[RMDB]
RNA sequence: GGGAACGACUCGAGUAGAGUCGAAAAAGCGUAGCGGUACGCCGCUACGCAAGGCGCAUUUGAACUGUAUUGUACGCCUUGCAUAAGGCAAAAGUACUAAAAAAACGUGCCGUUACGACGGCACGAAAAAACAUCCAUUGGUUCGCCAAUGGAUGAAUCCUUAAAUAGUCUUCGGACUAUUUAAGGAAAAAGAAACAACAACAACAAC
Reactivity to DMS in 0.01 (KOAc 150mM, MgCl2 10mM, bicine 150mM(pH8.5), 24C), signal-to-noise 1, nucleotides 027 to 156: a090g000c020g000u000a010g000c010g020g040u010a090c160g030c000c000g030c030u000a010c010g050c010a020a010g010g030c000g040c030a100u000u030u010g030a100a190c090u020g020u000a300u010u000g010u000a040c010g000c010c010u000u060g000c040a080u000a050a080g000g040c040a070a080a080a080g010u040a140c070u020a020a000a110a110a060a040a060c030g020u010g060c040c010g000u020u000a030c140g020a130c000g020g000c010a000c010g000a000a010a030a040a060a040c010a010u000c000c000a030u000u010g020g040u000u010c300g050c000c010a030a030u010g020g000a000u000g000a030a020
Reactivity to 2A3 in 0.01 (KOAc 150mM, MgCl2 10mM, bicine 150mM(pH8.5), 24C), signal-to-noise 3, nucleotides 027 to 156: a000g010c020g010u000a010g000c000g000g010u040a040c200g020c030c030g010c000u000a000c000g000c000a000a010g020g000c010g000c040a050u070u030u260g110a180a100c100u070g040u160a120u170u060g030u020a040c040g000c010c020u010u030g030c060a070u060a300a030g010g010c010a030a030a000a130g050u050a030c070u180a030a030a000a010a060a040a090c010g000u000g010c020c000g000u000u040a020c240g000a010c010g040g020c000a000c000g010a060a000a000a000a000a000c000a000u000c000c000a000u000u010g010g000u010u030c030g040c090c000a000a000u000g010g000a000u000g000a000a020